[RMDB]
Structure probing data (2A3 and DMS) for a 177-nucleotide construct. It was measured as part of the RMDB library M2PK50. 2A3 adducts were read by reverse transcription with SuperScript II with manganese. The RNA was probed in 150 mM KOAc, 10 mM MgCl2 and 150 mM bicine (pH 8.5) at 24 C.

RNA sequence: GGGAACGACUCGAGUAGAGUCGAAAACACAUUCUAUUCGUAGAAUGUGGAACGUAGAGAGAUCGACAGCGUCGCAGCUAUGACGAACGAGGAAGAGCGCGCAGGGAUCGGGCUUCGGCCCGAUCAACUGUGCACACAAAUUCGUUUGUGUGCACAGAAAAGAAACAACAACAACAAC
Reactivity to 2A3 in 0.01 (KOAc 150mM, MgCl2 10mM, bicine 150mM(pH8.5), 24C), signal-to-noise 8, nucleotides 027 to 126: c000a000c000a000u000u000c000u020a020u050u080c180g110u040a010g000a000a000u000g010u010g000g030a080a030c040g070u150a020g030a010g010a010g000a180u080c040g040a030c040a050g040c020g070u120c030g000c040a080g030c030u120a070u210g060a050c050g050a150a030c050g020a040g070g030a080a040g010a020g030c040g000c010g010c020a020g110g070g000a000u000c000g000g000g000c010u040u060c220g100g000c010c000c010g000a000u000c000a000a010
Reactivity to DMS in 0.01 (KOAc 150mM, MgCl2 10mM, bicine 150mM(pH8.5), 24C), signal-to-noise 9, nucleotides 027 to 126: c000a010c000a010u000u000c000u000a020u000u010c180g020u000a010g010a010a000u000g020u000g000g010a070a060c120g010u010a070g010a100g010a110g010a060u000c030g010a090c090a080g010c050g010u000c060g010c090a080g010c060u000a060u010g000a090c060g010a050a090c090g000a090g000g000a080a060g000a070g010c060g010c080g030c090a090g000g000g000a010u000c000g010g000g010c000u000u010c210g030g000c000c000c000g010a000u000c010a030a090